[RMDB]
RNA sequence: GGGAACGACUCGAGUAGAGUCGAAAACAAAAAGUGAGCACAGGGGGAAGUGCACACAAGAACUCGGUGUUUUGUCAGUUCUUCGGAUUAUUAUUAUUGUUAGUGAGUUUGACGAAAGAAGAGUCGAGUAUAGUCAUGCUUUCGAGCAUGACUAUACAAAAGAAACAACAACAACAAC
Reactivity to DMS in 0.01 (KOAc 150mM, MgCl2 10mM, bicine 150mM(pH8.5), 24C), signal-to-noise 4, nucleotides 027 to 126: c080a060a050a070a090a050g000u010g010a070g020c010a000c080a040g000g000g010g000g030a140a080g000u000g000c010a060c070a020c030a070a080g000a090a040c020u000c030g000g040u030g000u010u000u000u010g000u000c030a050g010u000u000c020u010u010c070g000g000a060u010u020a040u020u030a090u050u010a100u010u010g000u040u000a100g020u010g000a020g000u010u020u020g010a010c000g010a040a050a040g000a140a080g000a050g010u000c050g010a130
Reactivity to 2A3 in 0.01 (KOAc 150mM, MgCl2 10mM, bicine 150mM(pH8.5), 24C), signal-to-noise 8, nucleotides 027 to 126: c060a020a070a020a030a010g080u060g020a040g010c030a010c040a070g030g000g000g020g070a060a020g020u020g030c030a010c010a000c010a040a060g070a080a020c010u010c040g070g020u090g060u090u060u050u040g060u020c040a080g020u090u050c000u090u060c030g030g020a020u010u030a040u040u030a050u090u030a080u060u180g120u080u040a140g040u060g150a050g030u040u100u100g030a020c010g040a050a030a080g090a060a020g010a030g030u030c030g010a010
An RNA of 177 nucleotides, treated with DMS and 2A3 and read out base by base.
Values cover nucleotides 27 to 126.
The 2A3 profile rests on 8,696 reads.